This 177-nucleotide RNA was probed chemically with DMS and 2A3. For DMS, 1,802 sequencing reads were counted. The RNA was probed in 150 mM KOAc, 10 mM MgCl2 and 150 mM bicine (pH 8.5) at 24 C. Source: RMDB library OK2TST, as collected in RNAgym.

[RMDB]
RNA sequence: GGGAACGACUCGAGUAGAGUCGAAAAUGUGGGAGAAAUCCUCAAAAAACGGCUUUCGAAGAAUUGAGGGCCUAUUUCUAAUACCUAGAACAUCCACUUCAAUCUUUGCCCUGUCUUACUACUGCAACUCAUUUGAGUGAUUCGUCACUCAAAUGAGAAAAGAAACAACAACAACAAC
Reactivity to DMS in 0.01 (KOAc 150mM, MgCl2 10mM, bicine 150mM(pH8.5), 24C), signal-to-noise 3, nucleotides 027 to 126: u000g020u030g020g000g010a060g010a090a090a180u010c000c010u010c040a000a090a080a110a070a100c200g020g000c100u000u000u000c030g020a070a160g010a110a110u000u010g000a030g010g000g000c020c010u010a040u000u010u000c060u010a070a120u000a060c090c070u020a030g020a060a110c180a060u000c040c050a050c090u010u010c050a030a060u010c040u000u000u000g000c030c030c000u000g010u020c040u020u000a080c100u000a060c120u000g010c110a060a130
Reactivity to 2A3 in 0.01 (KOAc 150mM, MgCl2 10mM, bicine 150mM(pH8.5), 24C), signal-to-noise 3, nucleotides 027 to 126: u060g000u120g000g020g010a040g020a030a050a000u010c020c000u030c030a040a060a020a010a010a010c060g020g020c040u020u080u110c060g140a190a160g080a300a190u140u050g000a020g010g000g030c000c000u040a050u000u030u020c010u030a140a120u050a150c050c060u030a050g050a090a010c010a040u040c020c000a050c020u050u030c040a040a160u000c050u100u070u090g000c010c000c010u020g010u000c030u070u050a070c060u010a040c040u060g080c000a050a060